Chemical mapping of a 177-nucleotide RNA with 2A3.
RNA sequence: GGGAACGACUCGAGUAGAGUCGAAAAAGCUGGUUGCCUGUCCUACGCUCAGCGCAACAACCGCAGACAUGCGACGGCCCCCGCCGGGACGCCAAUCCCAGUGCGAGGGCCUGACCACCGAGGAAGUCAUGACCGACGAGUUCGCUCGUCGGUCAUGAAAAGAAACAACAACAACAAC
Reactivity to 2A3 in 0.01 (KOAc 150mM, MgCl2 10mM, bicine 150mM(pH8.5), 24C), signal-to-noise 1, nucleotides 027 to 126: a000g100c100u100g000g000u060u040g010c000c000u000g020u060c020c070u030a060c000g000c030u130c060a040g010c000g010c200a000a030c000a000a020c050c010g020c010a030g020a090c060a130u280g000c000g020a010c070g040g000c000c000c000c000c010g000c000c020g010g000g000a050c060g040c100c050a020a030u000c000c000c000a030g020u110g070c000g000a030g000g000g000c000c020u010g000a000c000c000a050c000c040g000a110g000g090a080a000g000u030